An RNA of 177 nucleotides, treated with 2A3 and DMS and read out base by base. For 2A3 the reverse transcriptase was SuperScript II with manganese. Conditions: 150 mM KOAc, 10 mM MgCl2 and 150 mM bicine (pH 8.5), 24 C. Values cover nucleotides 27 to 126. For 2A3, 4,027 sequencing reads were counted. The DMS profile rests on 2,366 reads.
RNA sequence: GGGAACGACUCGAGUAGAGUCGAAAAGACACGACGGAGACGUCGUGUCAAAGAGUGGGAAACCACUCAAAGAGCCACAGCUUCGGCUGUGGCUCAAGGCGCGGCAACGUCCGCGGAACAAACCCAACGUUUUAAUUACGUUCGCGUAAUUAAAACGAAAAGAAACAACAACAACAAC
Reactivity to 2A3 in 0.01 (KOAc 150mM, MgCl2 10mM, bicine 150mM(pH8.5), 24C), signal-to-noise 2, nucleotides 027 to 126: g000a000c000a000c000g010a000c000g000g050a060g020a050c010g010u010c000g000u000g010u000c000a000a000a000g000a010g000u000g000g000g000a010a080a100c010c000a000c000u010c000a030a030a000g000a000g030c010c000a000c020a010g050c010u130u170c300g120g000c000u000g000u010g010g010c000u000c010a000a000g010g000c010g000c030g000g000c040a250a120c210g040u030c030c000g000c030g000g010a070a020c030a090a090a050c000c010c010a030a030
Reactivity to DMS in 0.01 (KOAc 150mM, MgCl2 10mM, bicine 150mM(pH8.5), 24C), signal-to-noise 3, nucleotides 027 to 126: g000a020c010a000c000g010a020c000g020g010a250g000a230c000g030u000c000g010u000g000u000c000a030a070a120g020a020g020u000g000g010g000a240a130a170c020c000a020c000u000c000a040a090a070g000a000g010c000c000a010c010a000g020c000u000u010c260g020g000c010u000g020u000g000g020c010u000c000a010a020g010g030c000g020c000g000g010c010a150a110c200g000u000c000c010g010c000g000g000a100a080c170a040a090a140c010c000c020a090a240